[RMDB]
RNA sequence: GGGAACGACUCGAGUAGAGUCGAAAACAUCUGUUAGUGUAAUUAUUGGUGUCAAUCAUUCCAUCCGUUGGAAUGCGUGGAAUGCGUAUUGUUUCCUCGGAGAAGGACGUGGCGAACAUUUAUAGCAGACUCGUAUAAAUUUCGAUUUAUACGAGUCAAAAGAAACAACAACAACAAC
Reactivity to 2A3 in 0.01 (KOAc 150mM, MgCl2 10mM, bicine 150mM(pH8.5), 24C), signal-to-noise 8, nucleotides 027 to 126: c010a060u070c040u070g070u130u110a150g010u070g070u190a150a140u160u120a080u130u110g060g000u050g020u050c020a040a070u060c010a040u050u000c000c010a030u020c010c020g080u090u030g020g040a040a030u040g010c010g000u030g040g300a280a110u210g000c000g000u030a090u060u190g120u040u040u030c010c010u010c010g030g010a070g010a120a050g020g000a010c040g030u020g020g000c030g020a030a010c010a010u070u150u070a140u080a050g020c040a020
Reactivity to DMS in 0.01 (KOAc 150mM, MgCl2 10mM, bicine 150mM(pH8.5), 24C), signal-to-noise 9, nucleotides 027 to 126: c050a080u010c060u000g000u000u000a070g020u000g010u000a090a080u010u000a090u010u000g010g020u000g010u010c060a080a090u010c030a050u000u000c010c010a130u000c070c040g010u010u000g010g010a050a040u000g000c090g010u000g010g020a090a060u010g010c070g010u000a070u010u010g010u000u000u000c010c000u000c060g000g010a050g010a100a090g000g000a040c300g020u000g000g010c110g000a090a090c060a050u000u000u000a060u000a090g010c140a130